[RMDB]
RNA sequence: GGGAACGACUCGAGUAGAGUCGAAAAGCGGAGGCAAUAACUACGCCGCAAAAGUGAAUGACCAGGAAAUCAGCCGUGGGCAAUUCGAGAACGCCUUCAACAGCGAGCGUAAUCGCAUGCAGCAACACGGUAGGCAAAUAUUCGUAUUUGCCUACCGAAAAGAAACAACAACAACAAC
Reactivity to 2A3 in 0.01 (KOAc 150mM, MgCl2 10mM, bicine 150mM(pH8.5), 24C), signal-to-noise 2, nucleotides 027 to 126: g030c020g030g030a040g060g000c080a060a050u160a140a030c050u070a040c090g000c000c000g050c020a040a000a100a000g200u150g050a060a050u110g050a040c040c050a020g040g160a090a100a050u120c030a050g120c000c060g100u080g020g040g000c050a020a120u100u000c050g010a000g020a100a040c070g000c020c010u110u080c020a070a090c000a120g010c010g030a070g030c020g050u070a090a030u090c050g000c020a010u120g020c010a050g010c000a000a060c070a000
Reactivity to DMS in 0.01 (KOAc 150mM, MgCl2 10mM, bicine 150mM(pH8.5), 24C), signal-to-noise 2, nucleotides 027 to 126: g050c130g010g040a080g000g000c040a090a080u010a130a080c090u000a080c210g000c010c000g020c100a070a060a090a160g040u000g000a080a040u000g000a120c100c040a080g010g000a100a060a070u050c100a100g000c060c030g000u000g030g000g010c030a120a050u010u000c060g010a070g000a150a110c060g000c010c030u010u000c060a110a060c100a100g010c040g010a080g020c070g010u000a020a130u000c070g000c090a060u010g010c080a030g000c070a020a060c180a110